[RMDB]
RNA sequence: GGGAACGACUCGAGUAGAGUCGAAAAUAAAAGAGCGUACGACUGACAAAGACUGUACGACAGUCUGACUCUCUCGUACGCUUGUUCAACGAGAGAGAGAGUGCGUUGGAACAAGUGUGAAAAAAAACCCGUAUUAACGGUUCGCCGUUAAUACGGGAAAAGAAACAACAACAACAAC
Reactivity to DMS in 0.01 (KOAc 150mM, MgCl2 10mM, bicine 150mM(pH8.5), 24C), signal-to-noise 1, nucleotides 027 to 126: u000a060a100a080a060g010a040g000c000g040u000a020c010g020a040c050u000g000a040c050a110a300a030g000a020c000u000g030u000a190c180g000a220c000a010g000u000c010u000g000a300c270u000c000u010c030u000c000g050u000a010c000g020c010u000u010g030u000u000c080a050a020c070g010a110g010a100g010a050g010a030g000a050g030u000g020c030g000u020u000g020g000a070a030c100a010a040g020u010g000u000g000a000a000a000a010a090a060a060a210
Reactivity to 2A3 in 0.01 (KOAc 150mM, MgCl2 10mM, bicine 150mM(pH8.5), 24C), signal-to-noise 1, nucleotides 027 to 126: u150a010a110a030a050g060a010g010c010g000u000a010c010g000a000c000u020g000a000c010a000a050a000g000a000c010u020g020u160a170c180g100a100c100a000g010u010c010u010g000a010c000u010c000u000c010u000c010g000u000a000c010g010c000u000u010g010u000u020c000a000a020c030g000a010g000a010g000a010g020a020g010a010g080u080g050c020g030u060u080g090g020a040a040c040a080a090g050u040g020u120g260a050a030a010a000a000a000a020a040
Structure probing data (DMS and 2A3) for a 177-nucleotide construct. The DMS profile rests on 1,014 reads. For 2A3 the reverse transcriptase was SuperScript II with manganese. Conditions: 150 mM KOAc, 10 mM MgCl2 and 150 mM bicine (pH 8.5), 24 C.